[RMDB]
RNA sequence: GGGAACGACUCGAGUAGAGUCGAAAAGAUAUGGAAUUAGGACCACAACUAAAUCGGAAACGAUUAAGUGUUGGGUCUAAUUCCUAAGUCAAACUCUGUGCACGGUCUUCGGACCGUGCACAGAGAACAAUGAUACUCCGUUCGCGGAGUAUCAUUGAAAAGAAACAACAACAACAAC
Reactivity to 2A3 in 0.01 (KOAc 150mM, MgCl2 10mM, bicine 150mM(pH8.5), 24C), signal-to-noise 2, nucleotides 027 to 126: g020a010u070a040u140g000g010a010a000u030u000a070g070g110a060c010c020a130c030a300a040c010u070a040a030a040u000c000g000g030a060a040a030c030g010a020u030u050a150a150g090u040g080u300u250g040g010g010u000c000u000a000a010u000u000c000c000u000a060a010g060u020c020a040a060a210c000u000c020u000g000u000g120c060a010c060g070g010u050c060u230u300c300g080g000a020c000c000g000u010g000c020a000c010a010g000a000g000a000a000
Reactivity to DMS in 0.01 (KOAc 150mM, MgCl2 10mM, bicine 150mM(pH8.5), 24C), signal-to-noise 2, nucleotides 027 to 126: g010a030u000a300u010g000g010a020a000u000u000a010g000g010a010c000c020a080c020a050a060c020u010a050a030a010u000c000g010g000a100a090a160c000g010a000u010u000a060a080g000u000g000u000u000g010g000g020u000c000u000a000a000u000u000c000c000u000a020a100g010u000c020a160a120a210c010u000c000u000g020u000g000c000a020c000g000g000u000c010u000u000c200g020g000a030c000c000g020u000g000c010a000c000a000g000a010g020a050a120